The record gives the reactivity of an RNA of 177 nucleotides to DMS and 2A3. The RNA was probed in 150 mM KOAc, 10 mM MgCl2 and 150 mM bicine (pH 8.5) at 24 C.
RNA sequence: GGGAACGACUCGAGUAGAGUCGAAAAGAGGAGAACAGCUAUAGGAAUACCGUUGAUGCAUUACACUAAACAUUUGAAAGAUGUAAUACGUCAUUUGGUGUUCCUAUAGUUACCCGUUCAACUUUUAGUUCUACCACUUGUUCGCAAGUGGUAGAACAAAAGAAACAACAACAACAAC
Reactivity to DMS in 0.01 (KOAc 150mM, MgCl2 10mM, bicine 150mM(pH8.5), 24C), signal-to-noise 1, nucleotides 027 to 126: g030a060g070g010a300g010a060a060c130a200g030c000u000a000u000a000g000g000a020a010u010a000c010c000g000u000u010g000a010u000g000c040a000u000u000a000c000a000c000u040a120a070a070c130a120u000u000u090g030a070a110a060g000a120u010g010u000a000a010u000a020c000g000u000c000a010u000u000u010g030g020u000g010u000u000c000c000u000a000u000a000g000u000u010a050c010c080c180g000u000u000c050a040a140c000u040u000u000u000a130
Reactivity to 2A3 in 0.01 (KOAc 150mM, MgCl2 10mM, bicine 150mM(pH8.5), 24C), signal-to-noise 5, nucleotides 027 to 126: g130a010g060g040a070g000a110a020c020a010g020c010u000a000u000a000g010g010a000a010u000a010c000c000g000u000u000g000a000u000g000c010a010u000u010a010c000a000c000u080a090a230a040c090a240u100u140u280g160a150a120a010g120a100u010g010u010a010a000u030a020c010g000u000c010a000u040u090u170g000g020u000g010u000u000c000c010u010a000u000a000g000u000u000a000c000c000c000g020u030u020c020a050a010c010u000u040u000u020a040
Reactivities are given for positions 27 through 126. Source: RMDB libraries RFM100 and RFMREP, as collected in RNAgym.